RNA sequence: GGGAACGACUCGAGUAGAGUCGAAAAUUGAUGGUGCCAUAGUUGGAGCUAUGACUUCCAUUAACAGUGAACUGUUAGGUCUAACACAUUGGACAACGACACCUAAUUUUUAUUACUACUCUAUAUAUAAUUACACAAGUGAGAGGACUCGUGGCACACUAACUAACGGUUUCGACCGUUAGUUAGUAAAAGAAACAACAACAACAAC
Reactivity to 2A3 in 0.01 (KOAc 150mM, MgCl2 10mM, bicine 150mM(pH8.5), 24C), signal-to-noise 6, nucleotides 027 to 156: u090u100g040a040u060g040g000u000g020c020c020a020u020a040g030u040u080g100g020a080g000c040u110a100u190g020a100c010u180u010c020c010a020u050u030a020a040c020a020g020u030g270a190a130c020u020g020u010u060a020g000g000u000c020u050a130a010c050a010c020a160u060u170g030g010a040c030a120a050c120g080a020c020a020c040c000u020a060a070u020u070u030u060u100a120u150u100a040c000u020a030c000u000c030u010a070u030a040u040a040u080a300a220u160u250a050c020a010c000a080a080g010u050g030a110g010a070g050g040a020c020u020c080g000u020g010g000c020a020c000
Reactivity to DMS in 0.01 (KOAc 150mM, MgCl2 10mM, bicine 150mM(pH8.5), 24C), signal-to-noise 1, nucleotides 027 to 156: u000u000g000a040u010g040g010u000g050c000c000a070u020a000g020u000u000g050g010a160g000c040u010a100u020g000a040c050u010u010c010c010a080u010u010a040a020c000a090g020u000g000a080a140c060u000g000u000u000a050g000g020u000c030u020a030a080c060a070c060a170u010u000g000g020a160c040a090a130c010g010a090c020a020c010c020u020a030a030u000u000u000u000u000a060u020u010a140c010u020a060c000u020c000u000a150u000a120u010a170u020a100a060u010u000a040c050a050c040a070a180g010u000g010a100g000a170g010g000a090c030u010c020g000u000g000g000c030a060c050